[RMDB]
RNA sequence: GGGAACGACUCGAGUAGAGUCGAAAAUGUCACUGACGCCGGCGAUCGCUCCAUCAAAGUGUUUGAUUUUUUUGGCCAGAUCAAGCUUGUCAUUGGAGGCCAAUUCUCCUUACCUUGGGGUGUGGAGCUACUGCGACAGAUUCGUCUGUCGCAGUAGAAAAGAAACAACAACAACAAC
Reactivity to DMS in 0.01 (KOAc 150mM, MgCl2 10mM, bicine 150mM(pH8.5), 24C), signal-to-noise 2, nucleotides 027 to 126: u000g010u000c050a050c080u000g010a070c090g010c070c040g010g020c050g000a050u010c080g030c030u000c010c020a090u000c110a060a070a110g000u010g010u000u000u000g010a000u000u000u000u010u000u000u010g000g000c030c010a120g010a110u000c020a010a040g000c060u010u000g000u010c110a100u010u010g010g000a180g000g000c020c010a020a050u020u000c020u010c010c050u000u010a040c030c020u000u020g000g020g010g010u000g010u000g000g000a040g010
Reactivity to 2A3 in 0.01 (KOAc 150mM, MgCl2 10mM, bicine 150mM(pH8.5), 24C), signal-to-noise 2, nucleotides 027 to 126: u070g010u030c020a030c070u070g090a020c040g020c050c000g020g000c050g040a040u040c040g020c020u000c040c030a050u060c040a040a090a030g110u100g100u090u090u090g050a080u000u010u030u030u020u110u100g030g000c020c010a040g010a090u080c000a020a000g000c040u160u160g080u130c030a120u060u110g090g030a040g000g040c000c000a000a010u030u000c020u010c010c030u080u080a060c010c010u150u130g300g070g020g010u060g040u050g000g030a010g000
Chemical mapping of a 177-nucleotide RNA with DMS and 2A3.
Reactivities are rounded to 0.1 and cut off at 0 and 3.
DMS adducts were read by reverse transcription with MarathonRT.
2A3 adducts were read by reverse transcription with SuperScript II with manganese.
High DMS reactivity at an A or C suggests that its Watson-Crick edge is free.
The 2A3 profile rests on 1,897 reads.